The record gives the reactivity of an RNA of 207 nucleotides to 2A3 and DMS. 2A3 adducts were read by reverse transcription with SuperScript II with manganese. Source: RMDB library OK3TST, as collected in RNAgym. The reactions ran in a buffer of 150 mM KOAc, 10 mM MgCl2 and 150 mM bicine (pH 8.5), at 24 C.
RNA sequence: GGGAACGACUCGAGUAGAGUCGAAAAGCAGUAGGAGCCGCACAGGAGCAACAGAAGCACCAGGAUCGAGGACUCCUCGCAGCGCCAUGUCCAGGCGGCGCUAAGGAGGCUGUUGCAGCAUCUCCACACCGACAGAAGAACAAAAUCAACCAAAUCAACGAUCAUGAUUAUUCGUAAUCAUGAUCGUAAAAGAAACAACAACAACAAC
Reactivity to 2A3 in 0.01 (KOAc 150mM, MgCl2 10mM, bicine 150mM(pH8.5), 24C), signal-to-noise 4, nucleotides 027 to 156: g010c040a010g020u140a060g010g050a010g060c050c020g050c040a050c030a120g050g060a070g030c010a010a030c020a060g050a080a030g050c030a020c030c030a010g040g040a090u120c060g060a070g050g030a070c020u040c000c000u010c030g110c050a020g020c000g020c000c010a080u140g060u090c050c050a050g030g090c040g000g010c000g000c010u030a040a050g070g010a010g000g030c030u050g010u040u050g000c000a000g010c010a070u040c010u030c020c010a040c020a010c020c020g050a030c030a070g070a080a000g030a070a050c060a090a110a040a060u130c040a010a070c040c040a070a070a080u110c060a050
Reactivity to DMS in 0.01 (KOAc 150mM, MgCl2 10mM, bicine 150mM(pH8.5), 24C), signal-to-noise 2, nucleotides 027 to 156: g000c030a060g000u000a140g040g030a080g060c000c050g070c050a210c080a120g010g000a090g000c000a110a150c020a080g020a100a090g040c040a130c080c030a110g080g000a100u040c070g000a170g020g000a110c020u010c020c000u000c000g000c070a070g000c020g050c000c020a080u020g010u000c090c140a260g020g080c060g000g030c000g000c020u000a070a060g020g010a040g000g020c020u000g000u010u010g020c050a070g010c080a100u000c000u000c020c030a090c110a090c050c000g000a220c060a080g030a030a110g020a020a110c050a040a050a070a140u000c080a050a100c030c030a050a030a080u000c050a150